[RMDB]
RNA sequence: GGGAACGACUCGAGUAGAGUCGAAAAGAAGCUGUCUUCGGACAGCUUCGGUUUAUUUGGUGUAAUCGUCGAGUCGUUCCCAUGAUUACAUGAAAUAAUUUGCUGUCUGCGGAUUCGUCCGCAGAAAUCGAUGUUCGAUAUUCGUAUCGAACAUCGAAAAAGAAACAACAACAACAAC
Reactivity to 2A3 in 0.01 (KOAc 150mM, MgCl2 10mM, bicine 150mM(pH8.5), 24C), signal-to-noise 1, nucleotides 027 to 126: g000a010a000g000c010u000g000u020c000u060u090c190g090g000a000c010a000g000c000u000u010c010g000g000u000u080u050a130u010u020u050g030g010u100g000u040a130a170u090c100g080u020c000g080a010g010u000c030g010u000u000c000c000c000a000u010g000a000u020u020a040c000a010u180g110a000a110a000u160a040a150u120u040u250g140c040u120g040u120c000u000g000c000g000g030a030u050u050c160g120u040c000c000g000c010a010g000a010a000a000
Reactivity to DMS in 0.01 (KOAc 150mM, MgCl2 10mM, bicine 150mM(pH8.5), 24C), signal-to-noise 2, nucleotides 027 to 126: g000a010a000g010c000u000g040u000c000u000u010c250g020g000a020c000a000g010c000u000u020c000g000g030u000u000u000a030u000u000u010g020g020u010g000u040a090a090u000c030g000u010c040g000a020g010u000c010g000u000u020c000c010c000a000u010g000a050u000u010a050c100a080u000g020a040a090a100u010a060a130u000u000u020g010c080u020g010u000c000u000g030c000g000g010a010u000u030c250g000u000c000c010g010c020a000g010a000a050a060

Conditions: 150 mM KOAc, 10 mM MgCl2 and 150 mM bicine (pH 8.5), 24 C. An RNA of 177 nucleotides, treated with 2A3 and DMS and read out base by base. For 2A3 the reverse transcriptase was SuperScript II with manganese. 2A3 is a SHAPE reagent: it acylates the 2'-hydroxyl of flexible nucleotides of all four kinds.